The data come from the RNA Mapping Database (RMDB), library OK1LIB. Chemical mapping of a 177-nucleotide RNA with DMS and 2A3. High DMS reactivity at an A or C suggests that its Watson-Crick edge is free.
RNA sequence: GGGAACGACUCGAGUAGAGUCGAAAAAGGAGUUCCUGCAGCAUUUUUACCUGAUGCUUGCGUGAAUUUAGAGACUUUGAUGCAAUUAAGUGGGAUACCGACUGGAAUAUCUCAUCAACUAGGGCUAUGCGUAUAACGUGUUCGCACGUUAUACGCAAAAAGAAACAACAACAACAAC
Reactivity to DMS in 0.01 (KOAc 150mM, MgCl2 10mM, bicine 150mM(pH8.5), 24C), signal-to-noise 2, nucleotides 027 to 126: a010g030g000a090g000u000u000c010c030u000g050c040a000g000c000a000u000u000u000u040u120a090c190c160u030g010a000u000g000c000u000u020g010c000g040u010g000a070a040u020u000u010a050g000a120g020a120c040u010u000u030g000a090u020g000c070a070a100u030u010a040a180g010u010g010g020g000a030u020a010c050c010g020a150c220u130g000g000a150a160u000a050u030c000u010c000a030u000c120a060a050c120u000a030g000g010g000c010u000a120
Reactivity to 2A3 in 0.01 (KOAc 150mM, MgCl2 10mM, bicine 150mM(pH8.5), 24C), signal-to-noise 2, nucleotides 027 to 126: a000g130g010a110g000u000u000c000c010u010g000c000a000g000c020a030u000u000u040u130u160a130c020c020u090g000a000u000g010c010u080u160g000c000g000u000g120a010a030u040u070u110a070g000a030g050a080c060u080u060u190g110a100u150g010c010a060a240u020u040a200a000g070u050g020g000g010a010u020a070c010c010g220a280c300u200g000g030a070a080u000a000u020c000u000c010a010u090c000a000a030c010u120a030g030g000g070c000u000a040